[RMDB]
An RNA of 177 nucleotides, treated with DMS and 2A3 and read out base by base. 2A3 adducts were read by reverse transcription with SuperScript II with manganese.
RNA sequence: GGGAACGACUCGAGUAGAGUCGAAAAGCAAGGGAUCCCGAUCCUUGGGUCCAGAGGAUGUACUGACCGCUUCUAUCGAGUAACGCCUAAGAGGUUUUCACGUAGCACUUGAGAAGAAGACCCUCUGACAAGGAUGGUCGUUCGCGAUCAUUCUUGUAAAAGAAACAACAACAACAAC
Reactivity to DMS in 0.01 (KOAc 150mM, MgCl2 10mM, bicine 150mM(pH8.5), 24C), signal-to-noise 9, nucleotides 027 to 126: g010c060a050a050g000g000g010a060u010c020c020c030g000a120u020c020c010u000u010g000g000g010u010c060c040a070g000a070g010g010a120u010g010u020a080c080u010g000a100c070c040g000c020u000u000c020u010a150u000c030g010a030g010u010a080a090c110g000c030c030u010a090a080g010a090g010g000u010u010u030u010c080a100c090g010u020a090g010c100a040c030u010u000g000a060g000a090a110g000a050a040g000a100c040c000c010u000c020u010g010
Reactivity to 2A3 in 0.01 (KOAc 150mM, MgCl2 10mM, bicine 150mM(pH8.5), 24C), signal-to-noise 9, nucleotides 027 to 126: g080c050a030a060g070g010g020a080u090c020c010c020g020a070u050c020c000u040u060g040g000g020u040c050c010a010g010a020g060g030a070u130g050u160a100c050u070g090a070c020c030g030c010u030u000c010u030a070u040c010g010a010g030u040a070a040c040g030c010c020u090a130a050g070a150g090g030u060u030u070u110c090a090c090g060u090a040g040c040a020c050u040u060g030a030g010a180a020g030a020a010g030a060c010c000c000u010c020u030g020

The data come from the RNA Mapping Database (RMDB), library OK1LIB.